[RMDB]
RNA sequence: GGGAACGACUCGAGUAGAGUCGAAAAGCGAUGAAUGCCUGAAUGAGCACUGGUUCAGUGACGUCAGUCAUGCCAGGAAAACCAUCAGUGAAUGGCGUCAGGAUUAUAAUGAGUGCCGCCCGCACUCGCCUGUUGAACAGUUCGCUGUUCAACAGGCAAAAGAAACAACAACAACAAC
Reactivity to DMS in 0.01 (KOAc 150mM, MgCl2 10mM, bicine 150mM(pH8.5), 24C), signal-to-noise 3, nucleotides 027 to 126: g000c150g020a110u000g000a140a050u010g000c020c000u010g010a030a090u000g010a170g030c140a200c010u000g000g000u020u020c100a110g040u000g010a000c010g000u000c300a070g010u000c000a020u010g020c030c010a040g000g000a060a080a130a110c030c000a020u010c040a210g000u010g020a120a030u000g000g020c040g010u010c010a020g010g000a030u010u010a080u010a080a050u000g010a000g010u000g000c040c130g000c040c050c040g000c020a030c020u000c040
Reactivity to 2A3 in 0.01 (KOAc 150mM, MgCl2 10mM, bicine 150mM(pH8.5), 24C), signal-to-noise 3, nucleotides 027 to 126: g050c040g050a060u140g070a160a070u240g090c000c000u020g060a090a070u050g010a060g050c050a020c070u000g000g080u160u120c090a050g050u030g010a000c000g060u160c050a060g000u010c010a020u030g020c030c000a040g090g000a040a020a020a060c020c010a010u020c020a010g220u020g250a230a030u000g010g000c010g030u000c010a010g050g010a020u100u130a090u150a200a210u190g010a000g000u020g020c020c070g000c010c030c010g000c000a000c000u010c010
This 177-nucleotide RNA was probed chemically with DMS and 2A3. Source: RMDB library OK2TRN, as collected in RNAgym. The RNA was probed in 150 mM KOAc, 10 mM MgCl2 and 150 mM bicine (pH 8.5) at 24 C. DMS adducts were read by reverse transcription with MarathonRT.